[RMDB]
RNA sequence: GGGAACGACUCGAGUAGAGUCGAAAAGAUAUGGACGCUGCCUAAUCAUAUCUAGUAUUGAGCUUUGGAUCGGAAACGAUCCCGAGCAAUGAUGUACAGGGAUAUGAUUAGGCAGCGUCCUAAGUCAGAUUGCAGUAGAGUUCGCUCUACUGCAAUCAAAAGAAACAACAACAACAAC
Reactivity to DMS in 0.01 (KOAc 150mM, MgCl2 10mM, bicine 150mM(pH8.5), 24C), signal-to-noise 1, nucleotides 027 to 126: g010a070u000a300u010g020g010a040c000g010c010u000g020c000c000u000a000a000u000c000a010u000a000u000c000u000a110g030u000a020u010u000g000a090g040c000u000u000u010g020g010a010u000c000g030g020a110a110a290c000g010a010u000c000c000c040g000a010g010c000a220a130u000g010a060u000g030u020a000c000a120g040g020g000a000u010a000u000g010a020u000u000a000g000g000c020a000g000c000g000u000c000c000u010a010a030g020u000c050a140
Description: This 177-nucleotide RNA was probed chemically with DMS. For DMS the reverse transcriptase was MarathonRT. For DMS, 1,394 sequencing reads were counted. Reactivities are rounded to 0.1 and cut off at 0 and 3. The reactions ran in a buffer of 150 mM KOAc, 10 mM MgCl2 and 150 mM bicine (pH 8.5), at 24 C. Values cover nucleotides 27 to 126.